[RMDB]
This 207-nucleotide RNA was probed chemically with DMS and 2A3. Reactivities are given for positions 27 through 156. Source: RMDB library OK3TST, as collected in RNAgym. The DMS profile rests on 2,807 reads.
RNA sequence: GGGAACGACUCGAGUAGAGUCGAAAAAGCCAUCUAAAAGGAACUGAGAUCUGUCAGUUUGUCCGGGGUCUCAAACUGAGGGCUGUAGGCUGUGUGUGCCAUUUGAUUUUUCCUGUACUGUAUCUCAAAAAACAUUCUACCCAGGCAGGUGUUAUGACUAAUUAGCUGGUUUCGACCAGCUAAUUAGAAAAGAAACAACAACAACAAC
Reactivity to DMS in 0.01 (KOAc 150mM, MgCl2 10mM, bicine 150mM(pH8.5), 24C), signal-to-noise 1, nucleotides 027 to 156: a070g010c010c010a080u000c010u020a090a140a100a210g000g020a080a150c110u030g000a090g010a080u010c030u000g040u000c010a040g000u000u010u000g010u000c150c020g040g000g060g020u020c040u000c020a030a120a120c050u000g010a060g000g020g010c040u020g000u010a060g030g010c080u000g000u000g020u000g070u000g000c040c040a140u010u010u000g000a130u000u000u000u000u000c010c020u000g020u000a080c070u000g030u000a090u000c030u020c080a000a040a050a080a040a040c050a070u000u010c000u000a070c070c050c020a090g000g030c040a040g020g020u000g010u000u000a050u000g010a230
Reactivity to 2A3 in 0.01 (KOAc 150mM, MgCl2 10mM, bicine 150mM(pH8.5), 24C), signal-to-noise 1, nucleotides 027 to 156: a000g010c020c010a030u030c040u140a110a060a040a090g030g000a140a090c070u050g000a030g010a130u050c010u040g180u070c030a120g030u020u220u140g050u030c100c050g000g000g050g000u010c010u030c080a040a080a040c030u070g020a030g050g030g000c030u000g020u050a020g010g030c010u000g040u000g010u000g010u040g110c030c000a070u040u000u220g100a120u010u060u070u040u020c010c010u010g010u020a120c000u040g050u050a100u020c110u040c060a050a070a000a000a000a000c040a050u140u060c000u050a070c060c010c060a000g050g000c030a020g070g000u030g030u010u140a160u140g050a040